[RMDB]
RNA sequence: GGGAACGACUCGAGUAGAGUCGAAAAGAUAUGGAUCUACAUGGAGUUGGCUAUUCGGAAACGAAUAGCCAACGAUGAAAUGUAGAGUCCUAAGUCAAAGCGCAUAUCGGUUCGCCGAUAUGCGCAAGGUAAAGAAUUGGUUCGCCAAUUCUUUACCAAAAGAAACAACAACAACAAC
Reactivity to DMS in 0.01 (KOAc 150mM, MgCl2 10mM, bicine 150mM(pH8.5), 24C), signal-to-noise 3, nucleotides 027 to 126: g010a000u000a020u010g000g000a080u000c000u000a000c000a010u000g000g000a000g020u000u000g000g000c000u000a010u000u000c000g010g010a010a000a030c000g010a010a000u000a000g010c000c000a010a000c000g000a080u010g000a100a140a010u000g000u000a010g000a050g010u000c000c010u000a010a100g000u000c000a090a090a170g000c000g010c000a010u000a000u000c000g010g000u000u010c290g030c000c000g000a000u000a000u000g010c010g020c000a000a010
Reactivity to 2A3 in 0.01 (KOAc 150mM, MgCl2 10mM, bicine 150mM(pH8.5), 24C), signal-to-noise 1, nucleotides 027 to 126: g010a000u010a010u040g000g000a000u030c010u010a000c000a000u020g000g030a010g020u010u000g000g020c000u010a000u000u000c000g000g000a020a000a000c000g000a000a020u010a000g010c000c030a000a000c000g000a010u010g000a000a000a000u010g000u010a000g020a010g100u080c010c000u000a010a000g010u000c020a100a140a000g000c000g010c000a020u020a010u010c000g000g100u070u110c300g050c080c000g000a000u000a000u010g010c010g000c000a010a000
The record gives the reactivity of an RNA of 177 nucleotides to DMS and 2A3. The DMS profile rests on 8,677 reads. Source: RMDB library TTRDEL, as collected in RNAgym. Conditions: 150 mM KOAc, 10 mM MgCl2 and 150 mM bicine (pH 8.5), 24 C. The 2A3 profile rests on 10,401 reads.